[RMDB]
RNA sequence: GGGAACGACUCGAGUAGAGUCGAAAAGCGGUACUCCAGAAGCGCUUGUCGACGCCGCUGACCAUCUUCGUGAACUACCGAUCAUUUCUGCUGCUGCUGAUUUCGACGGAUCACUGCGUGGCUAUGUUGACCUUAAAGCCAUGACAUCCCAAUUAGAACCUCGAGCAUUAUUCGUAAUGCUCGAGGUAAAAGAAACAACAACAACAAC
Reactivity to 2A3 in 0.01 (KOAc 150mM, MgCl2 10mM, bicine 150mM(pH8.5), 24C), signal-to-noise 2, nucleotides 027 to 156: g020c040g010g020u040a060c080u030c070c060a100g100a150a090g050c070g030c190u130u090g070u120c010g000a020c000g010c020c020g000c010u020g030a090c000c000a090u080c030u120u080c020g040u000g030a070a060c010u080a070c180c010g150a150u050c010a020u030u060u040c050u030g010c010u020g010c050u060g000c000u010g060a130u000u030u080c070g030a040c030g050g000a020u030c060a020c030u040g040c000g000u000g000g000c000u030a040u230g100u060u020g080a080c010c000u100u070a100a180a010g010c000c000a040u030g020a030c010a020u020c050c010c020a010a070u160u190a060g100a090
Reactivity to DMS in 0.01 (KOAc 150mM, MgCl2 10mM, bicine 150mM(pH8.5), 24C), signal-to-noise 1, nucleotides 027 to 156: g020c000g020g000u000a090c100u000c130c090a040g000a060a120g010c000g020c040u000u010g030u000c020g010a010c050g020c020c010g010c020u000g010a110c050c060a090u000c060u010u010c060g000u010g040a120a150c010u000a030c020c030g040a060u010c040a060u010u000u000c010u010g030c000u010g000c010u000g020c000u000g000a120u000u000u010c040g000a170c020g020g000a130u000c010a050c040u010g020c040g040u010g010g030c010u000a070u000g060u000u000g000a130c090c010u000u030a040a080a090g010c030c000a030u000g000a150c060a120u000c000c010c000a160a210u000u000a130g020a130